[RMDB]
RNA sequence: GGGAACGACUCGAGUAGAGUCGAAAAACAUCGAUCGGGUUCGUCCGCCUGGGUAAACGUGGUGCGUCAACAUUGUUCCUCUGCAGAUGGACUAACGCUAGAGCACGCCAAUUGACUAGAUUACGUGAAGGUAACUGGGAUUCGUCCCAGUUACCUUAAAAGAAACAACAACAACAAC
Reactivity to DMS in 0.01 (KOAc 150mM, MgCl2 10mM, bicine 150mM(pH8.5), 24C), signal-to-noise 2, nucleotides 027 to 126: a060c070a100u000c060g010a120u010c060g010g000g000u000u010c040g000u000c020c050g040c020c010u010g020g010g020u010a040a060a040c060g000u010g020g000u000g010c050g000u040c050a050a040c120a070u000u010g020u000u000c020c030u000c100u010g020c080a090g020a100u000g000g000a060c060u010a090a110c100g020c030u000a070g000a080g000c070a020c030g000c070c070a020a070u010u000g020a110c080u000a060g000a110u000u000a060c090g020u010g000
Reactivity to 2A3 in 0.01 (KOAc 150mM, MgCl2 10mM, bicine 150mM(pH8.5), 24C), signal-to-noise 1, nucleotides 027 to 126: a000c000a050u060c010g040a010u040c010g100g000g000u150u020c000g020u000c040c010g030c030c000u100g040g000g030u140a120a070a000c020g050u010g080g000u100g070c020g060u050c000a040a040c010a070u000u140g050u030u040c000c000u000c070u050g050c040a060g050a110u100g060g010a000c010u080a110a000c070g000c020u000a010g000a010g130c040a040c070g060c000c000a040a070u000u120g070a060c020u020a110g000a270u150u080a040c050g010u030g160
An RNA of 177 nucleotides, treated with DMS and 2A3 and read out base by base.
The 2A3 profile rests on 861 reads.
The RNA was probed in 150 mM KOAc, 10 mM MgCl2 and 150 mM bicine (pH 8.5) at 24 C.
For DMS, 1,887 sequencing reads were counted.
As a SHAPE reagent, 2A3 marks flexible, mostly unpaired nucleotides at the ribose 2'-OH.
2A3 adducts were read by reverse transcription with SuperScript II with manganese.
For DMS the reverse transcriptase was MarathonRT.